An RNA of 207 nucleotides, treated with 2A3 and read out base by base.
The data come from the RNA Mapping Database (RMDB), library M2RFPK.
The RNA was probed in 150 mM KOAc, 10 mM MgCl2 and 150 mM bicine (pH 8.5) at 24 C.
RNA sequence: GGGAACGACUCGAGUAGAGUCGAAAAUAUUUUUCAUACAGCGAAAGGCACAAGACUUCGAACAUUAUCGCAGUUAGUAGUUGCCUAAACCCAUUGCAAUAUAUGGGACAGUAGAGGUCGCAAGCCUAAAAGCUUCCGCCCUUCGGGGCGGAAGCAAGCUUAAUCAUUGGUUCGCCAAUGAUUAAGCAAAAGAAACAACAACAACAAC
Reactivity to 2A3 in 0.01 (KOAc 150mM, MgCl2 10mM, bicine 150mM(pH8.5), 24C), signal-to-noise 1, nucleotides 027 to 156: u060a020u070u170u050u010u090c090a080u140a210c050a000g020c060g150a240a010a000g000g010c010a010c020a050a040g010a000c000u010u000c010g010a180a080c050a300u110u240a090u180c030g020c020a000g000u010u010a160g070u070a050g000u110u010g000c040c020u030a080a050a050c000c000c000a000u000u000g010c010a050a000u010a020u000a000u200g000g000g000a010c030a000g050u090a040g010a070g050g030u090c010g000c150a010a000g020c000c050u100a080a090a010a010g020c000u000u010c020c000g050c000c010c050u100u200c290g020g000g050g100c040g000g010a010a010g000c010a000a000